[RMDB]
RNA sequence: GGGAACGACUCGAGUAGAGUCGAAAAUUGAAGGUAAAACAGCCUGUGGGUCAAACACACCCACAGGGCCCAUUGGGCGCUAGCACUCUGGUAUCACGGUACCUUUGUGCGCCUGUUUUACCGAAGGCUACUCGAUUCUUCGGAAUCGAGAAAAGAAACAACAACAACAAC
Reactivity to DMS in 0.01 (KOAc 150mM, MgCl2 10mM, bicine 150mM(pH8.5), 24C), signal-to-noise 5, nucleotides 027 to 129: u040u040g000a100a110g050g000u000a030a010a030a020c020a000g000c000c030u050g050u000g000g000g000u020c020a110a140a090c200a120c200a090c050c000c010a030c010a010g000g000g030c040c000c000a000u000u060g030g040g030c000g020c010u000a110g010c030a030c000u020c000u000g020g020u010a000u030c060a100c260g020g010u020a010c010c000u020u000u010g020u000g000c010g020c000c020u010g020u000u000u000u000a000c000c020g020a020a020g010g030c030u040a050
Reactivity to 2A3 in 0.01 (KOAc 150mM, MgCl2 10mM, bicine 150mM(pH8.5), 24C), signal-to-noise 7, nucleotides 027 to 129: u130u140g070a070a020g000g010u010a000a000a000a000c010a010g000c000c000u000g000u010g000g000g000u020c030a040a160a020c050a020c010a000c030c000c000a000c000a000g000g000g000c000c000c010a020u280u300g000g000g000c020g000c110u130a060g000c000a000c000u000c010u000g000g010u000a000u030c030a050c240g140g000u010a010c000c000u000u000u010g010u000g000c000g000c000c000u000g000u000u000u000u000a010c000c010g010a000a000g020g010c020u040a040